The record gives the reactivity of an RNA of 177 nucleotides to 2A3 and DMS. The RNA was probed in 150 mM KOAc, 10 mM MgCl2 and 150 mM bicine (pH 8.5) at 24 C. Source: RMDB library TTRDEL, as collected in RNAgym. For DMS the reverse transcriptase was MarathonRT.

[RMDB]
RNA sequence: GGGAACGACUCGAGUAGAGUCGAAAAGAUAUGGAGGUGAGCAACAGCUCCACAUCGGAAACGAUGUCGGAGACAUGCUCAUCUCCUAAGUCAAAGGAAAGCAAUUUGUUCGCAAAUUGCUUUCCAAUCAGAUUAUUACGUUCGCGUAAUAAUCUGAAAAAGAAACAACAACAACAAC
Reactivity to 2A3 in 0.01 (KOAc 150mM, MgCl2 10mM, bicine 150mM(pH8.5), 24C), signal-to-noise 3, nucleotides 027 to 126: g000a010u040a000u050g000g000a000g020g000u000g020a000g000c010a030a190c090a260g030c010u020c000c000a000c000a000u010c000g010g000a020a020a000c010g000a010u010g020u090c200g010g030a010g090a140c040a020u000g000c000u000c010a000u000c000u000c000c000u010a000a000g000u000c000a090a050a020g000g000a000a000a000g010c000a000a010u010u010u020g060u090u200c240g020c200a000a010a000u000u010g000c000u010u010u000c000c000a000a000
Reactivity to DMS in 0.01 (KOAc 150mM, MgCl2 10mM, bicine 150mM(pH8.5), 24C), signal-to-noise 5, nucleotides 027 to 126: g000a020u000a180u000g010g000a010g010g020u000g000a000g000c000a030a130c300a160g010c010u000c000c000a020c000a000u000c000g000g000a060a060a090c000g000a000u000g010u000c190g040g000a010g010a070c120a120u000g000c000u000c000a000u000c000u000c000c000u000a000a050g000u000c010a090a130a150g010g000a010a000a010g010c000a000a010u000u000u000g010u000u020c230g020c010a000a000a010u000u000g010c000u000u000u000c000c000a050a040